RNA sequence: GGGAACGACUCGAGUAGAGUCGAAAAGUGCAGAGUGAAAUUCAUAGGUGCGGCGCCAAUGUGGCGUAACGACCCGGUACUCCGCGCAGUCGAGCUGUAAACGUUCUGUGUUGGCGUUCAGGCCUCAGAUACUGAGCUCAUUCGUGAGCUCAGUAUCAAAAGAAACAACAACAACAAC
Reactivity to DMS in 0.01 (KOAc 150mM, MgCl2 10mM, bicine 150mM(pH8.5), 24C), signal-to-noise 3, nucleotides 027 to 126: g030u000g020c040a040g020a030g010u010g020a050a080a080u030u040c080a190u020a120g000g000u030g030c090g010g010c010g000c000c000a130a090u060g010u020g000g030c030g000u000a020a090c020g000a070c030c000c080g010g000u030a050c040u010c010c040g010c040g000c010a120g030u010c090g000a040g000c010u050g010u030a060a070a080c030g000u030u000c020u000g040u010g000u010u000g000g000c060g020u020u000c110a060g000g000c030c010u000c060a240
Reactivity to 2A3 in 0.01 (KOAc 150mM, MgCl2 10mM, bicine 150mM(pH8.5), 24C), signal-to-noise 1, nucleotides 027 to 126: g050u060g000c000a020g010a050g060u090g110a030a030a150u220u200c060a110u070a150g020g020u190g120c060g000g000c000g020c010c010a000a150u280g060u090g030g020c030g000u040a100a010c000g010a010c000c000c000g010g010u000a020c030u030c000c030g010c010g000c020a020g030u030c040g010a070g010c060u010g000u080a000a080a000c010g040u110u060c030u000g160u060g000u130u130g010g010c000g000u000u020c030a050g010g090c000c070u070c010a000
Chemical mapping of a 177-nucleotide RNA with DMS and 2A3. The reactions ran in a buffer of 150 mM KOAc, 10 mM MgCl2 and 150 mM bicine (pH 8.5), at 24 C. For DMS the reverse transcriptase was MarathonRT.